[RMDB]
The data come from the RNA Mapping Database (RMDB), library OK1LIB. Structure probing data (2A3) for a 177-nucleotide construct. 2A3 adducts were read by reverse transcription with SuperScript II with manganese.

RNA sequence: GGGAACGACUCGAGUAGAGUCGAAAAAUUCAACUUUAGCAUGGAUCGUCUCGUUGCUCGUAUCCAGCGACAAAGCCGUUCAAAACAGUUUCCUAAUGCAUUACUUUUCACCAUACUUGGCAACAGCAUGACUCAUCGGGUUCGCCCGAUGAGUCAUAAAAGAAACAACAACAACAAC
Reactivity to 2A3 in 0.01 (KOAc 150mM, MgCl2 10mM, bicine 150mM(pH8.5), 24C), signal-to-noise 2, nucleotides 027 to 126: a010u030u070c030a110a000c060u070u190u150a100g110c010a050u010g000g020a060u060c060g050u090c040u000c040g120u110u070g020c000u000c000g000u000a010u000c000c000a000g000c030g030a050c130a030a030a000g000c000c000g090u090u090c130a020a020a020a020c030a070g000u000u050u050c000c030u070a000a080u060g000c010a020u010u020a150c000u080u000u000u050c030a030c020c000a010u020a060c050u010u140g010g000c040a040a010c030a130g020c040